[RMDB]
RNA sequence: GGGAACGACUCGAGUAGAGUCGAAAACGUUGUCAUCGACAACACCCUAUGCAUUCAUGCUCUGUAAGGAUGCGCCGAAAGGCGAGCAAGCCCGAGUUGCCCAGACCUGAAAUGCAACACUUUAGAGAAAACCCGAAGCAGUUCGCUGCUUCGGGAACACCAACGAUAUGUUCGCAUAUCGUUGGUGAAAAGAAACAACAACAACAAC
Reactivity to 2A3 in 0.01 (KOAc 150mM, MgCl2 10mM, bicine 150mM(pH8.5), 24C), signal-to-noise 3, nucleotides 027 to 156: c100g000u000u010g000u010c100a210u110c250g010a000c000a000a000c000a040c000c000c000u060a090u130g000c010a000u000u020c010a030u100g040c040u030c000u010g040u030a070a010g070g020a050u050g030c000g000c020c010g070a050a020a050g000g020c020g040a020g010c030a030a060g040c000c010c010g090a080g100u070u130g040c020c020c000a020g030a010c010c000u020g020a030a020a020u030g020c000a000a090c040a080c080u130u140u160a080g010a010g000a140a200a030a020c000c000c000g000a010a000g000c010a000g020u040u120c180g040c180u000g000c000u000u000c000g020g000g010a000a000
Reactivity to DMS in 0.01 (KOAc 150mM, MgCl2 10mM, bicine 150mM(pH8.5), 24C), signal-to-noise 1, nucleotides 027 to 156: c140g050u000u000g000u000c020a170u000c080g010a100c000a010a050c050a050c000c030c010u010a080u000g020c040a100u020u010c020a160u010g050c020u000c000u000g000u020a270a250g010g020a120u010g020c080g050c050c020g030a040a080a160g020g010c010g000a120g000c040a240a120g000c010c040c010g000a210g040u000u000g010c060c020c010a100g000a150c010c040u000g010a110a090a100u000g000c020a050a110c070a120c060u000u000u020a130g010a230g020a060a060a090a250c010c000c000g010a000a050g020c000a090g040u000u000c300g020c010u010g010c040u000u000c000g030g010g000a020a000
Structure probing data (2A3 and DMS) for a 207-nucleotide construct. Values cover nucleotides 27 to 156. For 2A3 the reverse transcriptase was SuperScript II with manganese. DMS adducts were read by reverse transcription with MarathonRT. It was measured as part of the RMDB library M2RFPK. The DMS profile rests on 1,625 reads. The RNA was probed in 150 mM KOAc, 10 mM MgCl2 and 150 mM bicine (pH 8.5) at 24 C.